[RMDB]
RNA sequence: GGGAACGACUCGAGUAGAGUCGAAAAGUCUGUUUAGCCGGUUUGGUCGUCACGGGCGAGUGGAACUUGCCUGACAAUUGCAGAGGAGGUGUGAGCGUGUGUCUGGUGGACAAAAGGAUGGAAAGAGAUCCUUGGGCAUCUUCGGAUGCCCAAGGAUAAAAGAAACAACAACAACAAC
Reactivity to 2A3 in 0.01 (KOAc 150mM, MgCl2 10mM, bicine 150mM(pH8.5), 24C), signal-to-noise 1, nucleotides 027 to 126: g030u080c100u070g090u100u100u210a010g010c070c030g040g000u080u070u040g090g000u010c030g040u080c050a010c160g020g050g000c010g000a050g070u030g250g000a030a260c000u030u020g000c010c000u000g010a060c120a100a070u120u050g060c090a020g090a030g070g010a000g010g000u150g000u110g000a080g000c020g020u040g020u000g050u060c000u050g020g000u020g020g010a010c000a020a200a020a000g030g000a040u060g030g050a000a000a170g080a000g000
Reactivity to DMS in 0.01 (KOAc 150mM, MgCl2 10mM, bicine 150mM(pH8.5), 24C), signal-to-noise 1, nucleotides 027 to 126: g000u040c000u000g000u000u050u050a070g000c000c080g000g000u030u040u000g030g000u000c040g050u000c050a140c270g000g020g000c020g000a000g030u000g020g060a050a300c040u020u020g000c030c000u020g000a060c150a100a060u000u000g040c130a130g010a040g000g010a040g010g010u070g000u000g000a080g010c130g050u050g010u000g020u000c010u000g000g000u000g010g000a110c190a010a010a080a090g020g050a130u000g020g000a030a010a050g050a130g020